Chemical mapping of a 177-nucleotide RNA with DMS and 2A3.
The RNA was probed in 150 mM KOAc, 10 mM MgCl2 and 150 mM bicine (pH 8.5) at 24 C.
Values cover nucleotides 27 to 126.
DMS adducts were read by reverse transcription with MarathonRT.
For 2A3, 7,304 sequencing reads were counted.
[RMDB]
RNA sequence: GGGAACGACUCGAGUAGAGUCGAAAAUAGUACCACGUAUGCUAUCACCAUGGAGUGACGCUGAUCGAGGUACUACCAUGCGUACAGUACUGGUACUGCUAGAUCUAGCUAGGGAUCUCUCUGAUCAUCACUACUUCUACUUCGGUAGAAGUAGUGAAAAAGAAACAACAACAACAAC
Reactivity to DMS in 0.01 (KOAc 150mM, MgCl2 10mM, bicine 150mM(pH8.5), 24C), signal-to-noise 7, nucleotides 027 to 126: u000a020g020u000a010c000c000a080c160g010u010a090u000g010c080u000a210u000c080a040c030c020a180u010g020g010a120g020u000g020a040c300g010c020u000g010a090u010c060g010a100g000g010u000a010c010u000a050c020c010a050u000g020c100g010u000a060c120a090g020u010a050c110u010g000g020u000a020c030u000g020c070u000a070g010a040u000c020u000a060g000c080u000a090g000g010g010a040u000c030u000c090u000c050u000g000a080u010c090a160
Reactivity to 2A3 in 0.01 (KOAc 150mM, MgCl2 10mM, bicine 150mM(pH8.5), 24C), signal-to-noise 6, nucleotides 027 to 126: u070a000g000u010a010c000c010a040c040g020u030a010u100g050c020u050a050u210c050a020c040c030a220u210g080g030a230g060u030g020a040c030g020c080u070g030a160u180c050g030a050g020g010u010a000c000u020a050c010c010a030u110g030c040g040u090a060c030a150g040u050a060c070u130g060g000u020a030c010u070g000c010u040a010g010a070u010c040u060a040g110c040u060a070g090g070g030a040u010c030u010c000u000c050u090g100a090u040c050a050